[RMDB]
RNA sequence: GGGAACGACUCGAGUAGAGUCGAAAAAACCGAUUCUUUAAAUACCUACUACUAUUCUUAAUCACUAUAAUAAUCCUCGUAACCGCCAACAACCUCUUCCAACUAUUUAUCGGAUGAGAAGGCGUAGGAAUCAUAUCAUUCCUGCUAAUUGGAUGAUGAUAAUACGUUACUUCGGUAACGUAUUAUCAAAAGAAACAACAACAACAAC
Reactivity to 2A3 in 0.01 (KOAc 150mM, MgCl2 10mM, bicine 150mM(pH8.5), 24C), signal-to-noise 5, nucleotides 027 to 156: a000a010c060c010g040a150u160u070c050u050u210u060a080a120a060u110a070c010c010u040a030c030u020a030c010u080a160u160u120c030u060u150a090a120u120c040a070c080u090a060u070a280a140u080a060a030u040c010c010u020c040g080u060a080a060c050c000g000c010c010a030a060c020a040a060c080c010u000c000u030u000c020c000a030a020c040u040a110u140u140u090a120u280c100g010g010a020u020g010a010g010a010a040g020g000c000g020u000a000g000g030a000a010u030c050a060u070a020u210c020a030u030u090c010c010u010g070c070u080a150a080u120u080g040g000a010u030g020a010u030
Reactivity to DMS in 0.01 (KOAc 150mM, MgCl2 10mM, bicine 150mM(pH8.5), 24C), signal-to-noise 1, nucleotides 027 to 156: a080a080c030c040g020a220u000u020c050u000u000u010a120a110a090u010a140c010c010u010a140c050u000a120c010u010a120u020u000c030u060u000a020a080u010c040a100c040u000a060u040a070a100u000a070a070u010c000c010u000c050g010u000a050a080c140c000g000c040c010a010a040c000a170a070c030c020u000c040u010u000c010c000a030a100c060u010a070u020u000u010a140u010c090g040g000a050u030g010a040g000a060a100g010g040c090g050u010a000g000g010a010a050u010c050a090u000a110u010c030a060u000u030c000c000u000g000c040u010a070a090u010u000g010g020a100u010g000a130u000